RNA sequence: GGGAACGACUCGAGUAGAGUCGAAAAAAGAUGACGAUGCAAUAGUGCAGGACAAGGUUUUCAAACGCAAUGAUAAGGCAAUGCUGGAAUGGUGCUUGAGAGGCAAAGCAUGUAAAUGUGACGCCACCUUACAUUUCUUGUUCGCAAGAAAUGUAAGAAAAGAAACAACAACAACAAC
Reactivity to 2A3 in 0.01 (KOAc 150mM, MgCl2 10mM, bicine 150mM(pH8.5), 24C), signal-to-noise 7, nucleotides 027 to 126: a000a000g070a040u080g020a020c050g030a020u060g020c030a040a090u040a140g110u050g050c020a010g030g010a020c030a040a070g060g000u020u030u050u160c080a100a090a030c060g010c050a040a090u110g050a070u060a130a020g030g000c030a040a070u080g010c010u010g010g050a080a050u060g040g010u040g010c020u050u050g050a080g010a030g070g010c030a040a030a010g020c020a000u020g020u090a100a190a020u050g010u040g010a010c090g010c010c000a020c000
Reactivity to DMS in 0.01 (KOAc 150mM, MgCl2 10mM, bicine 150mM(pH8.5), 24C), signal-to-noise 9, nucleotides 027 to 126: a070a070g010a070u000g010a080c070g020a090u010g010c050a080a070u000a080g020u010g020c030a060g010g010a070c100a080a080g010g010u000u000u000u000c070a060a080a080c160g010c070a040a050u010g010a080u010a090a070g010g010c040a060a040u000g010c060u010g000g000a060a050u000g000g010u000g010c040u000u000g000a080g000a100g010g020c030a020a080a150g010c020a020u000g000u010a040a060a030u000g010u000g000a190c250g000c020c020a080c190